[RMDB]
RNA sequence: GGGAACGACUCGAGUAGAGUCGAAAAAGUUUCUGAUUUGCCGGGAGGCUGAAAAAGCUCGGAGAUUGUGUGUUGACAUCAGCUUCGUCUCUAUUAACCGUGGGAUGGGAGUUAAAUGACAGCACGACGUGGGGAUGAAUUUCGAUUCAUCCCCACGAAAAGAAACAACAACAACAAC
Reactivity to DMS in 0.01 (KOAc 150mM, MgCl2 10mM, bicine 150mM(pH8.5), 24C), signal-to-noise 1, nucleotides 027 to 126: a130g000u010u010u010c030u000g000a160u010u030u020g000c070c000g000g000g000a110g010g050c000u000g000a060a040a100a130a140g000c040u000c040g100g000a020g020a070u000u040g030u070g000u000g000u000u010g020a250c000a030u000c160a060g000c000u000u000c010g000u010c000u000c010u000a130u010u000a100a130c300c160g000u000g000g010g010a010u000g000g000g000a000g010u020u000a040a130a090u040g080a070c050a070g000c000a030c020g000a130
Reactivity to 2A3 in 0.01 (KOAc 150mM, MgCl2 10mM, bicine 150mM(pH8.5), 24C), signal-to-noise 3, nucleotides 027 to 126: a000g000u000u000u000c000u000g030a060u000u010u210g210c010c030g100g300g040a100g140g000c010u030g030a150a200a020a000a050g080c100u180c000g000g000a060g030a030u080u090g050u010g010u000g010u290u000g020a010c000a020u040c020a010g000c000u000u000c010g030u000c000u000c000u010a120u100u160a200a140c060c060g020u110g000g030g020a040u080g260g000g000a010g010u060u030a080a300a010u030g000a010c000a000g010c000a000c040g020a010
This 177-nucleotide RNA was probed chemically with DMS and 2A3. The reactions ran in a buffer of 150 mM KOAc, 10 mM MgCl2 and 150 mM bicine (pH 8.5), at 24 C. It was measured as part of the RMDB library RFM100. High DMS reactivity at an A or C suggests that its Watson-Crick edge is free.